Description:
Structure probing data (2A3 and DMS) for a 177-nucleotide construct. The data come from the RNA Mapping Database (RMDB), library TTRDES. For DMS, 25,734 sequencing reads were counted.
[RMDB]
RNA sequence: GGGAACGACUCGAGUAGAGUCGAAAAGAUAUGGACGUCCACGUCGCAACAGCUUGGAUCGGAAACGAUCCAAGACAUGCGAAGUGGAACGUCCUAAGUCAAACCGCUAGCCUUCGGGCUAGCGGAACACUACAAUUAUGUUCGCAUAAUUGUAGUGAAAAGAAACAACAACAACAAC
Reactivity to 2A3 in 0.01 (KOAc 150mM, MgCl2 10mM, bicine 150mM(pH8.5), 24C), signal-to-noise 8, nucleotides 027 to 126: g040a020u100a060u200g000g000a000c000g000u000c000c000a000c010g040u000c010g010c020a050a160c060a260g060c010u010u010g000g000a000u000c000g020g030a050a060a050c010g000a000u000c000c000a000a000g000a030c010a030u090g000c010g000a040a020g010u050g000g010a090a010c000g000u000c000c000u000a060a010g050u000c040a070a060a140c000c000g000c010u000a000g010c000c020u080u200c300g130g000g000c000u000a000g000c000g000g000a000a010
Reactivity to DMS in 0.01 (KOAc 150mM, MgCl2 10mM, bicine 150mM(pH8.5), 24C), signal-to-noise 9, nucleotides 027 to 126: g000a060u000a300u010g000g010a010c000g010u000c000c000a010c000g010u000c000g030c000a040a080c300a210g010c000u000u000g000g010a010u000c000g010g000a130a110a220c010g010a010u000c000c000a010a000g000a020c100a160u000g010c000g000a030a030g020u000g000g000a030a010c010g010u000c000c000u000a010a090g010u000c050a110a130a220c010c000g000c000u000a000g000c000c000u000u020c250g030g000g010c000u000a000g000c000g000g000a010a050